[RMDB]
RNA sequence: GGGAACGACUCGAGUAGAGUCGAAAAUAGCUGCCACUUCAUCGUCACCAUUAGCAGCACCAUGAUCAGGACCAUCGUCAUCUGGGAACUGACAGUGACAUUGUAAACAUUUGCAUUGCUUAAAAAGCGUCGGGCAGGUAUUCGUACCUGCCCGACGAAAAGAAACAACAACAACAAC
Reactivity to 2A3 in 0.01 (KOAc 150mM, MgCl2 10mM, bicine 150mM(pH8.5), 24C), signal-to-noise 1, nucleotides 027 to 126: u080a040g000c000u000g060c000c000a090c000u220u180c000a160u010c000g050u000c000a000c070c000a100u000u210a000g020c120a080g000c000a010c070c000a010u270g000a210u230c200a030g030g020a000c000c080a200u000c060g200u000c000a100u000c000u030g140g000g000a040a040c000u030g000a000c000a080g000u000g000a100c110a070u000u120g010u010a040a160a000c000a120u030u000u130g000c000a000u000u010g000c000u100u000a000a030a030a030a030g050